[RMDB]
RNA sequence: GGGAACGACUCGAGUAGAGUCGAAAAACGCGGAGUACGCUCCGCGACAACACUUCUUUCGACCCGCUAACCGAGACCUAUGGGUCGUUAAAUUACGUCUCUAUCUUACUCACAUUACAUCGCACAAAAAACGUGGUUCGGUUCGCCGAACCACGAAGACAGACUAACCGUUCGCGGUUAGUCUGUCAAAAGAAACAACAACAACAAC
Reactivity to 2A3 in 0.01 (KOAc 150mM, MgCl2 10mM, bicine 150mM(pH8.5), 24C), signal-to-noise 1, nucleotides 027 to 156: a000c000g020c000g000g000a000g000u100a040c210g010c010u050c010c000g040c010g030a000c000a040a050c040a010c060u120u090c060u010u260u230c000g000a000c100c000c000g000c170u270a030a030c020c020g010a000g010a050c020c000u100a080u170g000g000g000u000c030g100u000u010a030a030a010u260u120a000c000g020u000c010u000c000u000a130u060c060u100u130a000c010u100c100a060c000a120u010u200a170c050a170u080c100g020c090a050c100a150a010a010a070a110a000c000g000u030g000g000u000u000c000g030g030u010u020c160g000c050c000g000a000a000c000c000a010c000g000a000a000